[RMDB]
Chemical mapping of a 177-nucleotide RNA with DMS and 2A3. Conditions: 150 mM KOAc, 10 mM MgCl2 and 150 mM bicine (pH 8.5), 24 C. 2A3 adducts were read by reverse transcription with SuperScript II with manganese. It was measured as part of the RMDB library TTRDES.

RNA sequence: GGGAACGACUCGAGUAGAGUCGAAAAGAUAUGGACUCUCGGGAGUACGUUGAUCACACUGGGUCGGAAACGACCUUGUGGGAGUAUCGAGAGUCCUAAGUCAAAAGCAUGUACUUCGGUACAUGCACCACUCUUCCAUGUUCGCAUGGAAGAGUGGAAAAGAAACAACAACAACAAC
Reactivity to DMS in 0.01 (KOAc 150mM, MgCl2 10mM, bicine 150mM(pH8.5), 24C), signal-to-noise 2, nucleotides 027 to 126: g010a010u000a010u000g000g000a030c000u000c000u000c010g000g010g010a300g040u000a010c000g020u010u020g000a040u010c000a030c020a030c300u020g000g000g020u000c000g040g010a010a010a030c000g020a030c000c000u000u000g020u000g000g000g000a030g030u000a020u010c010g000a000g000a010g000u000c000c000u000a000a070g000u010c010a100a060a160a200g010c010a020u000g010u000a000c010u000u020c200g020g020u000a020c020a000u000g020c010a060
Reactivity to 2A3 in 0.01 (KOAc 150mM, MgCl2 10mM, bicine 150mM(pH8.5), 24C), signal-to-noise 3, nucleotides 027 to 126: g010a000u010a000u020g000g000a000c010u010c010u000c030g000g050g170a300g290u040a000c040g180u300u050g030a020u000c000a000c010a020c110u050g040g000g000u000c010g000g000a000a010a010c020g010a010c000c000u020u010g010u000g010g020g000a040g000u020a020u300c000g000a000g000a000g000u000c000c010u000a010a000g010u000c000a020a030a020a060g000c000a000u000g000u000a020c010u080u100c300g140g000u000a000c010a000u000g000c000a030